[RMDB]
Structure probing data (DMS) for a 177-nucleotide construct. The reactions ran in a buffer of 150 mM KOAc, 10 mM MgCl2 and 150 mM bicine (pH 8.5), at 24 C. Values are in units of 0.01, from 0 to 300, in steps of 10.

RNA sequence: GGGAACGACUCGAGUAGAGUCGAAAAGCCGGAGGAGCAAAGGUGAUUAGAGACCCCUGUAGUUCCGGCCGUAAACUAUGCCAACUGGGUGUUACGUAGUGGUACCCACGAGAAAUCAAGUAUAUGGGUAGAAACAGAGGUUCGCCUCUGUUUCUACAAAAGAAACAACAACAACAAC
Reactivity to DMS in 0.01 (KOAc 150mM, MgCl2 10mM, bicine 150mM(pH8.5), 24C), signal-to-noise 1, nucleotides 027 to 126: g010c000c000g010g010a080g010g020a300g000c050a030a080a030g010g000u000g040a200u010u000a220g000a300g000a150c090c020c090c090u000g050u000a160g020u020u000c000c030g040g020c000c120g020u000a040a020a130c060u000a040u050g000c100c000a000a220c300u000g020g030g060u010g000u000u010a050c050g000u020a070g000u000g000g000u000a040c010c000c000a070c000g010a210g000a100a050a130u000c060a030a040g000u010a050u000a030u000g020g010